This 177-nucleotide RNA was probed chemically with 2A3 and DMS. The RNA was probed in 150 mM KOAc, 10 mM MgCl2 and 150 mM bicine (pH 8.5) at 24 C. The data come from the RNA Mapping Database (RMDB), library OK2TRN. For 2A3, 6,332 sequencing reads were counted.
RNA sequence: GGGAACGACUCGAGUAGAGUCGAAAAGGAGUGCUACCGAAAGGUAGCACUCCAACAAAUCGGUGUAAAUGCAGCCCGUGUUACACCGUGCGGCACAGCGGAAACGCUGAUGUCGUAUAUAGGGCUACUAAUACCAGGAGUUCGCUCCUGGUAUUAGAAAAGAAACAACAACAACAAC
Reactivity to 2A3 in 0.01 (KOAc 150mM, MgCl2 10mM, bicine 150mM(pH8.5), 24C), signal-to-noise 1, nucleotides 027 to 126: g000g000a000g010u010g000c010u010a010c000c000g040a060a060a080g010g010u000a000g000c000a000c000u000c000c000a010a010c000a000a000a000u080c000g020g000u010g010u020a050a060a020u100g060c040a010g000c000c000c000g050u070g060u050u010a000c000a000c000c000g010u020g000c000g000g000c010a000c000a010g000c000g010g020a050a070a020c010g000c000u010g010a070u000g000u000c010g000u000a000u000a000u020a010g000g000g010c000u020a030
Reactivity to DMS in 0.01 (KOAc 150mM, MgCl2 10mM, bicine 150mM(pH8.5), 24C), signal-to-noise 3, nucleotides 027 to 126: g010g010a010g040u000g000c000u000a020c010c000g000a120a120a190g000g020u000a010g010c000a010c000u000c000c000a020a030c080a050a060a050u000c000g000g000u000g000u000a000a020a080u010g010c100a050g010c010c000c000g000u010g020u000u000a010c000a010c000c000g020u010g010c000g000g010c000a020c000a020g000c020g000g000a140a080a150c010g020c000u010g000a050u000g040u000c000g030u000a040u000a070u000a070g010g020g020c000u000a230